[RMDB]
RNA sequence: GGGAACGACUCGAGUAGAGUCGAAAAGAUAUGGAUGUUCUAAGCCGAUAAGACGAUAUCGGAAACGAUAUUCGUCUUUUGACGGCUUAGGCAUCCUAAGUCAAAGGUACUGGUUCGCCAGUACCAAGUUCCAGUCUUGGUUCGCCAAGACUGGAACAAAAGAAACAACAACAACAAC
Reactivity to DMS in 0.01 (KOAc 150mM, MgCl2 10mM, bicine 150mM(pH8.5), 24C), signal-to-noise 2, nucleotides 027 to 126: g020a020u000a270u010g000g000a000u000g010u020u010c010u000a030a010g020c010c000g030a230u010a010a000g030a000c010g010a020u000a000u010c030g010g000a080a050a140c000g010a030u000a000u010u020c000g010u000c000u030u000u000u000g030a180c220g010g000c000u000u000a000g010g000c000a020u000c000c000u000a000a070g000u000c020a210a140a140g010g010u000a000c000u000g000g000u020u010c300g020c000c000a010g020u000a000c010c000a030a050
Reactivity to 2A3 in 0.01 (KOAc 150mM, MgCl2 10mM, bicine 150mM(pH8.5), 24C), signal-to-noise 1, nucleotides 027 to 126: g020a000u030a000u110g010g000a000u010g000u230u300c010u020a020a010g000c000c040g240a160u110a250a020g000a000c020g010a000u000a000u000c000g050g000a030a020a000c020g000a000u000a010u080u210c010g000u050c000u000u010u010u000g000a000c020g000g060c050u000u000a000g000g050c000a010u000c000c010u000a030a010g000u000c040a020a070a150g010g010u000a000c010u000g030g140u030u110c300g020c100c040a000g000u020a010c000c010a000a000
Chemical mapping of a 177-nucleotide RNA with DMS and 2A3.
For 2A3, 3,158 sequencing reads were counted.
DMS adducts were read by reverse transcription with MarathonRT.
The RNA was probed in 150 mM KOAc, 10 mM MgCl2 and 150 mM bicine (pH 8.5) at 24 C.